Chemical mapping of a 177-nucleotide RNA with 2A3 and DMS. For 2A3 the reverse transcriptase was SuperScript II with manganese. It was measured as part of the RMDB library TTRINS. Conditions: 150 mM KOAc, 10 mM MgCl2 and 150 mM bicine (pH 8.5), 24 C. For DMS the reverse transcriptase was MarathonRT.
RNA sequence: GGGAACGACUCGAGUAGAGUCGAAAAGAUAUGGAUUACGAGAAGCGUACCGUUUGACGCCACUUUCGUGUUCGGAAACGAACACGAAAGUGGCCGAGGUACGAACUACUUCGAGUAAUCCUAAGUCCAUCCACUUAUGGUUCGCCAUAAGUGGAUGAAAAGAAACAACAACAACAAC
Reactivity to 2A3 in 0.01 (KOAc 150mM, MgCl2 10mM, bicine 150mM(pH8.5), 24C), signal-to-noise 1, nucleotides 027 to 126: g030a030u140a140u260g000g000a000u020u000a000c010g000a010g040a080a000g030c000g020u010a010c000c020g070u190u260u260g020a020c030g000c030c010a010c000u080u000u020c040g040u000g000u080u010c040g010g070a090a110a130c060g000a000a000c060a040c000g010a030a000a010g000u010g020g110c000c000g000a000g000g010u010a000c020g000a000a000c040u230a000c010u000u020c010g000a050g000u000a000a000u000c000c000u000a090a000g000u060c010
Reactivity to DMS in 0.01 (KOAc 150mM, MgCl2 10mM, bicine 150mM(pH8.5), 24C), signal-to-noise 3, nucleotides 027 to 126: g000a060u000a300u010g000g000a020u010u000a010c000g010a300g050a030a000g000c010g020u000a010c000c010g040u020u020u020g000a020c300g020c010c010a040c010u010u000u010c000g040u000g020u000u010c000g030g000a110a100a300c000g000a000a010c000a010c000g010a000a000a010g020u000g000g040c010c000g000a000g010g010u000a000c000g000a020a060c090u020a300c000u000u000c000g000a300g010u010a000a010u010c010c000u010a020a110g000u010c070